[RMDB]
RNA sequence: GGGAACGACUCGAGUAGAGUCGAAAACGAUCGAAAUCGGCCAAGCGCAGUUGUCCGCACAGGCCCUGGGCGGCCAACGUGUGGGCGAUCACAUGUCCCACACUUAGCCCAGCGACGCCGAUGUGUAGCUAAUCGAUACCUUCGGGUAUCGAUUAGCAAAAGAAACAACAACAACAAC
Reactivity to DMS in 0.01 (KOAc 150mM, MgCl2 10mM, bicine 150mM(pH8.5), 24C), signal-to-noise 2, nucleotides 027 to 126: c060g040a090u000c110g000a060a230a040u020c050g000g000c010c010a150a300g050c020g040c070a110g000u040u000g050u010c040c020g000c060a000c120a150g030g030c080c120c040u000g000g020g060c000g000g050c060c080a000a040c210g060u000g050u030g020g020g060c080g070a030u050c300a190c300a050u050g030u040c000c040c000a000c010a000c020u040u030a120g000c040c020c040a110g000c090g020a090c210g000c000c000g030a080u000g000u000g000u000a170
Reactivity to 2A3 in 0.01 (KOAc 150mM, MgCl2 10mM, bicine 150mM(pH8.5), 24C), signal-to-noise 3, nucleotides 027 to 126: c020g050a060u170c070g110a080a000a120u040c000g000g010c020c020a130a090g020c060g040c120a040g010u040u050g050u080c040c000g020c020a040c050a050g130g000c040c060c000u010g010g010g000c030g040g010c060c020a000a040c020g010u020g000u020g020g000g000c000g010a030u090c060a040c010a170u220g150u300c000c000c000a000c000a000c040u060u070a030g000c000c020c000a000g030c050g020a030c040g000c000c040g070a100u060g020u020g030u070a060

The data come from the RNA Mapping Database (RMDB), library OK1LIB. This 177-nucleotide RNA was probed chemically with DMS and 2A3. The RNA was probed in 150 mM KOAc, 10 mM MgCl2 and 150 mM bicine (pH 8.5) at 24 C. For 2A3, 1,724 sequencing reads were counted. The DMS profile rests on 1,580 reads.